This 177-nucleotide RNA was probed chemically with DMS and 2A3. 2A3 adducts were read by reverse transcription with SuperScript II with manganese. It was measured as part of the RMDB library OK2TRN. For DMS the reverse transcriptase was MarathonRT.

RNA sequence: GGGAACGACUCGAGUAGAGUCGAAAAAAAGGAAGGUUAUGACCCAUUAAGAGAUAUCAACCUAAUACCUGAUAUAGUUGGUAGGUACAACAGAAAUAAAUGGUAUAGAUCAUUUUUGACAUGGUUCACGUCAGUCAUGAUUCGUCAUGACUGACGUAAAAGAAACAACAACAACAAC
Reactivity to DMS in 0.01 (KOAc 150mM, MgCl2 10mM, bicine 150mM(pH8.5), 24C), signal-to-noise 2, nucleotides 027 to 126: a030a040a040g020g010a120a050g020g010u000u000a100u010g010a140c040c010c000a100u040u010a150a120g000a090g010a060u000a040u010c110a090a100c080c060u000a140a050u000a060c020c010u010g010a220u010a070u010a040g010u000u000g000g010u000a070g010g020u020a070c060a030a020c050a040g000a070a060a120u000a040a050a100u000g000g000u010a070u010a060g010a050u030c050a060u000u000u000u000u000g020a090c220a030u000g000g020u000u000c090
Reactivity to 2A3 in 0.01 (KOAc 150mM, MgCl2 10mM, bicine 150mM(pH8.5), 24C), signal-to-noise 1, nucleotides 027 to 126: a000a000a060g130g030a080a010g010g000u120u040a070u130g040a050c000c020c000a010u050u070a070a000g030a000g010a000u050a030u100c080a080a080c010c020u080a070a000u080a060c010c000u050g050a020u080a030u040a130g000u010u020g000g070u050a090g220g030u120a060c010a040a000c000a020g130a110a200a000u050a000a070a040u160g000g000u010a050u000a130g140a010u050c000a070u070u080u010u070u090g020a010c000a030u110g040g000u040u070c060